This 207-nucleotide RNA was probed chemically with DMS and 2A3. DMS adducts were read by reverse transcription with MarathonRT. The data come from the RNA Mapping Database (RMDB), library OK3TST.
RNA sequence: GGGAACGACUCGAGUAGAGUCGAAAAGGAGAAAUCCGAGAACGGCGCAGCACUUCCCGGUGUGCAAGGCGACAUCAGCCUCGUGCAGUCCGACAAGUCCGCUGACCUGCAAGUCAACGUCAACAUCGCGCAGGAAUACAUCCAACGCAUCGGCAUGGACUACGGAAUGAUUCGUCAUUCCGUAGUCAAAAGAAACAACAACAACAAC
Reactivity to DMS in 0.01 (KOAc 150mM, MgCl2 10mM, bicine 150mM(pH8.5), 24C), signal-to-noise 1, nucleotides 027 to 156: g030g000a070g020a060a060a170u000c020c020g000a150g010a070a210c070g010g000c000g050c080a080g000c000a060c030u000u000c050c010c020g020g000u000g030u010g030c010a060a060g000g030c000g000a120c140a090u000c100a250g010c030c010u000c030g000u010g030c000a100g050u010c020c020g040a080c050a050a070g000u000c040c000g000c030u000g000a040c010c000u000g000c130a160a120g000u000c000a030a050c010g000u000c020a100a080c100a190u030c020g030c030g080c040a070g100g000a080a140u010a130c060a260u000c030c030a080a050c040g000c040a080u010c030g010g040c000a210u000g020
Reactivity to 2A3 in 0.01 (KOAc 150mM, MgCl2 10mM, bicine 150mM(pH8.5), 24C), signal-to-noise 3, nucleotides 027 to 156: g050g010a040g030a020a100a030u000c010c010g010a040g030a040a010c040g060g000c060g000c030a070g000c020a020c020u030u030c000c030c000g000g030u070g010u020g000c050a030a030g040g000c060g070a100c110a200u150c080a020g010c000c010u010c020g030u050g020c000a030g090u030c020c000g030a060c070a130a020g050u080c070c040g000c040u020g040a100c000c030u060g020c060a120a020g020u100c050a080a050c090g030u030c040a060a070c010a150u120c070g000c030g000c090a020g000g000a010a030u180a100c050a040u030c020c030a050a090c060g030c020a050u070c030g040g010c040a030u150g100